This 177-nucleotide RNA was probed chemically with DMS and 2A3. DMS adducts were read by reverse transcription with MarathonRT. The data come from the RNA Mapping Database (RMDB), libraries RFM100 and RFMREP. The RNA was probed in 150 mM KOAc, 10 mM MgCl2 and 150 mM bicine (pH 8.5) at 24 C.

[RMDB]
RNA sequence: GGGAACGACUCGAGUAGAGUCGAAAAUCCCCCGCAAGUCACUGUUAGCCCGCCAAGAAGCGACCCCUCCGGGGCGAGCUGAGCGGCGUGCGGCGGGGUGUCAUCCGUCAGUUCUCCUAGUGACGCACAAAGUAGGCUAAUUCGUUAGCCUACUUUGAAAAGAAACAACAACAACAAC
Reactivity to DMS in 0.01 (KOAc 150mM, MgCl2 10mM, bicine 150mM(pH8.5), 24C), signal-to-noise 9, nucleotides 027 to 126: u020c030c010c000c150c070g000c070a090a070g010u000c020a040c020u010g020u030u020a130g010c020c030c000g000c010c010a070a160g000a140a030g010c010g000a300c300c010c010c000u010c170c110g000g020g010g010c010g000a240g000c010u000g000a180g010c180g000g000c020g010u000g000c000g000g020c020g010g000g010g020u020g000u020c120a070u020c020c010g000u000c020a100g000u000u000c020u000c010c050u010a050g010u000g000a050c030g000c180a240
Reactivity to 2A3 in 0.01 (KOAc 150mM, MgCl2 10mM, bicine 150mM(pH8.5), 24C), signal-to-noise 8, nucleotides 027 to 126: u010c020c000c000c000c010g050c060a130a090g020u080c010a000c040u030g030u190u080a020g010c010c040c010g000c010c010a090a050g120a060a010g050c020g050a100c000c010c000c020u050c090c180g030g000g010g000c020g000a020g000c010u020g020a040g030c040g000g010c010g010u020g010c000g000g000c010g010g000g020g020u100g080u020c060a110u050c000c010g020u010c010a040g020u050u010c040u010c020c010u030a020g020u010g020a010c010g010c030a020